RNA sequence: GGGAACGACUCGAGUAGAGUCGAAAAGCACGUUUUGCAUGCUGAACGCGAAAGCGAGUAUGACCUGUGACCUCCGAAACAGGUCAUAAGCCGAGGAGGGAGGUGAUUGAGCAUGCUUUCGUGCGAAGGGUAACGUAUGGUUCGCCAUACGUUACCCAAAAGAAACAACAACAACAAC
Reactivity to 2A3 in 0.01 (KOAc 150mM, MgCl2 10mM, bicine 150mM(pH8.5), 24C), signal-to-noise 4, nucleotides 027 to 126: g010c000a000c000g000u000u020u110u150g000c010a020u000g000c010u050g090a120a030c020g000c010g040a120a020a000g030c010g010a020g050u060a010u050g020a000c000c000u000g020u020g070a060c020c080u180c040c040g010a050a050a020c020a000g000g000u000c010a000u000a000a020g000c010c000g040a090g090g040a060g020g080g020a010g000g030u060g070a260u060u080g040a020g000c000a000u000g000c000u000u020u000c000g000u000g000c000g010a030a020
Reactivity to DMS in 0.01 (KOAc 150mM, MgCl2 10mM, bicine 150mM(pH8.5), 24C), signal-to-noise 2, nucleotides 027 to 126: g050c010a000c000g000u000u000u020u070g000c020a020u000g000c010u000g000a130a090c010g000c040g030a170a180a140g010c000g000a270g000u030a010u000g000a000c050c000u010g000u000g000a090c120c000u000c130c080g010a110a170a110c010a090g000g020u000c080a010u000a050a090g000c050c060g020a300g020g020a090g030g000g030a130g030g000u000g020a110u000u040g010a010g010c010a000u000g000c010u030u050u000c020g050u010g000c000g010a080a050
The data come from the RNA Mapping Database (RMDB), library OK1LIB. This 177-nucleotide RNA was probed chemically with 2A3 and DMS. 2A3 adducts were read by reverse transcription with SuperScript II with manganese.